[RMDB]
RNA sequence: GGGAACGACUCGAGUAGAGUCGAAAAUGUGGUAGGCGGCAGCUGCCGUUUUGUGCUGUCGGGCUAUUCAUCGGGUGGGGUGUUGGCCUAUGCCCUCUGCUCCCAUCUGUCGGUCAAGCACCAGCGGUGGUGUGAGUCUAUUCGUAGACUCACACCAAAAAGAAACAACAACAACAAC
Reactivity to 2A3 in 0.01 (KOAc 150mM, MgCl2 10mM, bicine 150mM(pH8.5), 24C), signal-to-noise 4, nucleotides 027 to 126: u190g010u060g030g070u040a040g060g040c030g010g000c000a000g010c040u080g060c010c040g040u040u050u020u070g020u030g000c000u000g040u060c030g060g000g030c010u040a070u130u190c070a070u120c100g000g050g020u060g000g030g010g010u050g010u050u110g000g020c000c030u090a110u250g020c000c000c000u040c020u080g030c010u060c030c000c000a000u010c020u030g110u070c030g010g020u050c050a110a020g000c020a040c020c000a000g020c000g050g050
Reactivity to DMS in 0.01 (KOAc 150mM, MgCl2 10mM, bicine 150mM(pH8.5), 24C), signal-to-noise 2, nucleotides 027 to 126: u040g020u020g010g050u010a030g000g010c030g020g000c060a040g000c050u040g020c070c140g010u000u010u010u010g010u010g000c000u000g020u030c020g010g000g040c030u000a050u030u040c110a080u040c040g000g000g030u020g000g000g020g000u010g000u000u000g000g020c010c240u000a080u030g000c000c000c030u000c060u010g000c070u010c020c020c020a010u010c020u000g020u020c050g030g000u010c010a070a060g000c080a050c010c140a100g010c040g010g020